[RMDB]
RNA sequence: GGGAACGACUCGAGUAGAGUCGAAAAAUACACCAGAAGUAGGACUCAGCGACCGUCACAACAAGGUUGUGCUGGUAUCCGACGGUCGUAUAGCCCUGUCUUGCAGGUUGCCUUGCACUGACGUGCCACACCAUUUACAGAUUCGUCUGUAAAUGAAACGGUCAUACGUAUUCGUACGUAUGACCGUAAAAGAAACAACAACAACAAC
Reactivity to DMS in 0.01 (KOAc 150mM, MgCl2 10mM, bicine 150mM(pH8.5), 24C), signal-to-noise 3, nucleotides 027 to 156: a110u000a070c080a300c000c000a090g000a070a120g020u000a020g000g010a060c020u000c160a250g000c030g000a020c000c000g010u000c020a220c070a060a080c000a070a090g020g040u010u010g010u000g030c010u010g010g010u000a070u010c080c030g000a020c040g020g000u000c020g030u010a060u000a060g000c020c000c000u000g000u000c030u000u000g010c050a080g010g020u000u000g020c020c080u010u000g000c010a070c030u000g040a120c170g010u000g010c000c050a070c050a130c100c000a020u000u000u000a000c000a020g010a060u000u000c300g030u020c020u000g010u000a000a000a000u000g010a050a060
Reactivity to 2A3 in 0.01 (KOAc 150mM, MgCl2 10mM, bicine 150mM(pH8.5), 24C), signal-to-noise 4, nucleotides 027 to 156: a000u120a010c060a020c010c010a010g040a120a000g030u080a020g000g020a020c010u020c110a020g020c000g000a000c010c000g010u020c020a030c020a130a130c060a170a130g070g030u040u040g050u090g050c070u050g070g030u040a080u070c050c040g000a000c000g000g000u000c020g010u080a070u110a180g040c010c010c000u010g040u060c010u010u090g080c070a050g030g010u050u100g060c020c000u010u090g010c030a040c050u130g090a050c070g020u020g020c010c020a090c010a030c020c010a010u000u000u000a000c000a000g020a020u000u130c140g100u000c070u000g000u000a000a000a010u010g000a040a020